The record gives the reactivity of an RNA of 177 nucleotides to DMS and 2A3. The DMS profile rests on 2,052 reads. Conditions: 150 mM KOAc, 10 mM MgCl2 and 150 mM bicine (pH 8.5), 24 C. Reactivities are given for positions 27 through 126. The 2A3 profile rests on 2,257 reads.
RNA sequence: GGGAACGACUCGAGUAGAGUCGAAAAUUACUGCUUCGAGCAGAACAAGCUCUUCUACACGGUGCUCGUGCAGCUCGGCUUUCGCGUGACGCCGCUGAUCGCGCGCGUGCGCUGGCAGCGUCCGCCAAGUAGUGCAGUCAUUCGUGACUGCACUACUAAAAGAAACAACAACAACAAC
Reactivity to DMS in 0.01 (KOAc 150mM, MgCl2 10mM, bicine 150mM(pH8.5), 24C), signal-to-noise 2, nucleotides 027 to 126: u010u000a120c040u020g020c040u010u000c080g030a080g000c000a060g010a120a150c180a090a040g010c030u000c040u000u000c050u010a050c150a080c120g000g000u010g000c070u000c050g030u000g000c090a100g010c010u000c010g010g000c070u000u000u000c130g000c050g000u000g000a030c030g040c010c020g020c000u020g010a120u020c200g010c000g020c030g020c230g010u020g010c040g020c030u010g010g010c000a020g010c010g020u000c030c020g000c010c190a040
Reactivity to 2A3 in 0.01 (KOAc 150mM, MgCl2 10mM, bicine 150mM(pH8.5), 24C), signal-to-noise 3, nucleotides 027 to 126: u080u040a060c020u010g000c000u070u140c110g040a010g000c030a040g050a040a030c060a050a010g000c010u000c000u180u080c060u130a090c060a010c150g060g000u060g040c020u020c030g020u020g050c030a020g000c030u030c020g030g000c000u060u140u140c060g010c020g120u200g020a010c000g000c060c000g010c040u050g140a240u170c110g000c000g000c030g070c120g240u210g000c000g010c000u020g000g030c000a020g020c020g000u010c000c030g020c010c010a040